RNA sequence: GGGAACGACUCGAGUAGAGUCGAAAAAAGACCUCGGCCUGGUCAGCCAGGUGUUCGACGAGCAGACGUUGGCGGCCAUGCAGGGCCAUGUCGCCAUCGGGCACUGUCGUUACUCCACCACCGGGGAUGAGUCGAAAGGAUUCGUCCUUUCGACUCAAAAAGAAACAACAACAACAAC
Reactivity to DMS in 0.01 (KOAc 150mM, MgCl2 10mM, bicine 150mM(pH8.5), 24C), signal-to-noise 1, nucleotides 027 to 126: a060a090g000a100c000c020u000c180g030g020c020c020u000g000g000u000c300a270g000c000c030a090g000g000u000g020u010u000c010g010a000c000g080a120g000c050a080g010a110c010g000u000u000g000g010c030g010g000c070c080a010u000g010c090a200g000g000g000c090c020a030u010g010u020c000g010c000c000a010u000c000g010g050g020c030a110c030u000g040u000c000g010u000u000a080c040u000c010c010a130c140c070a030c020c030g000g000g000g030a210